[RMDB]
Structure probing data (DMS and 2A3) for a 207-nucleotide construct.
The reactions ran in a buffer of 150 mM KOAc, 10 mM MgCl2 and 150 mM bicine (pH 8.5), at 24 C.
For 2A3, 1,256 sequencing reads were counted.
DMS adducts were read by reverse transcription with MarathonRT.
RNA sequence: GGGAACGACUCGAGUAGAGUCGAAAACGAAUGGGCAGCGUAUCUUGUUAACACAACAGCGUGUCCCAACACGAAUGUGACAUUGUGUAUGAUUAACCCGCAUUUACUGCCAAAUGGAACGGACACUCGAACAAAUAAGACACGCAUAUCGGAAUGCAUCUUCCGGUCUAUUCGUAGACCGGAAGAUAAAAGAAACAACAACAACAAC
Reactivity to DMS in 0.01 (KOAc 150mM, MgCl2 10mM, bicine 150mM(pH8.5), 24C), signal-to-noise 1, nucleotides 027 to 156: c000g000a060a000u000g000g010g000c020a030g000c040g010u000a040u000c010u020u010g040u020u000a040a140c190a180c000a200a200c010a150g010c050g040u000g000u010c040c050c020a130a080c150a110c020g020a030a180u000g030u000g000a150c010a180u000u050g050u000g020u020a090u000g000a180u000u000a050a070c020c070c050g000c080a040u000u000u030a040c040u010g000c000c030a030a060a140u000g000g040a050a070c050g000g020a040c000a000c080u000c030g000a140a110c140a050a030a040u000a050a150g010a050c000a080c060g020c080a080u000a070u010c060g000g020a090a150u000g000c080
Reactivity to 2A3 in 0.01 (KOAc 150mM, MgCl2 10mM, bicine 150mM(pH8.5), 24C), signal-to-noise 3, nucleotides 027 to 156: c040g020a090a090u110g010g020g020c000a020g000c060g070u070a080u090c030u000u090g040u070u090a130a050c050a020c060a130a120c030a100g060c020g000u000g000u040c000c000c020a010a000c030a030c050g140a150a090u230g000u100g080a020c090a090u000u100g040u020g020u030a070u090g080a070u110u110a060a050c010c060c020g000c010a000u080u050u030a080c030u050g010c020c000a030a060a090u170g000g040a070a130c040g000g000a010c010a000c090u040c050g010a110a060c030a070a070a070u150a050a050g000a010c010a020c090g000c010a020u020a060u160c080g020g070a060a050u040g040c040
The data come from the RNA Mapping Database (RMDB), library OK3TST. The DMS profile rests on 1,396 reads.